[RMDB]
An RNA of 177 nucleotides, treated with 2A3 and DMS and read out base by base. For DMS, 889 sequencing reads were counted. For 2A3 the reverse transcriptase was SuperScript II with manganese. Conditions: 150 mM KOAc, 10 mM MgCl2 and 150 mM bicine (pH 8.5), 24 C. Values cover nucleotides 27 to 126.
RNA sequence: GGGAACGACUCGAGUAGAGUCGAAAAUUUGCGUGCAAUGAUCUGAACCAUUUUGAUUCCCUGCACCGUUAUUUCGUUGUGGCAUAAUCAAAUUAAGCCAUUGAUUUUAUGUUUGUGGAAAACGUUUAAAUGAUUUUCGUUUCGACGAAAAUCAUUUAAAAGAAACAACAACAACAAC
Reactivity to 2A3 in 0.01 (KOAc 150mM, MgCl2 10mM, bicine 150mM(pH8.5), 24C), signal-to-noise 1, nucleotides 027 to 126: u000u070u130g090c050g030u020g000c070a060a040u080g040a000u150c000u210g050a110a040c110c010a090u000u140u200u060g000a000u000u000c010c000c000u000g000c000a000c000c000g150u080u070a210u180u190u080c130g040u010u050g000u000g120g010c000a000u000a180a000u080c000a000a030a090u040u140a030a030g010c020c000a000u020u040g080a000u090u090u140u230a080u020g060u000u000u110g090u120g180g000a000a000a000a110c050g050u000u000u000
Reactivity to DMS in 0.01 (KOAc 150mM, MgCl2 10mM, bicine 150mM(pH8.5), 24C), signal-to-noise 1, nucleotides 027 to 126: u060u000u000g030c030g080u020g000c000a100a030u010g040a130u050c110u000g020a030a130c030c000a120u000u000u000u000g000a190u040u000c040c080c000u040g000c080a070c100c050g020u000u030a080u000u050u030c060g010u000u000g000u010g000g010c010a010u080a070a000u040c080a000a070a110u000u000a140a170g020c220c300a010u010u000g000a040u000u050u000u000a000u000g000u000u000u020g000u110g060g000a090a030a030a050c060g000u000u070u000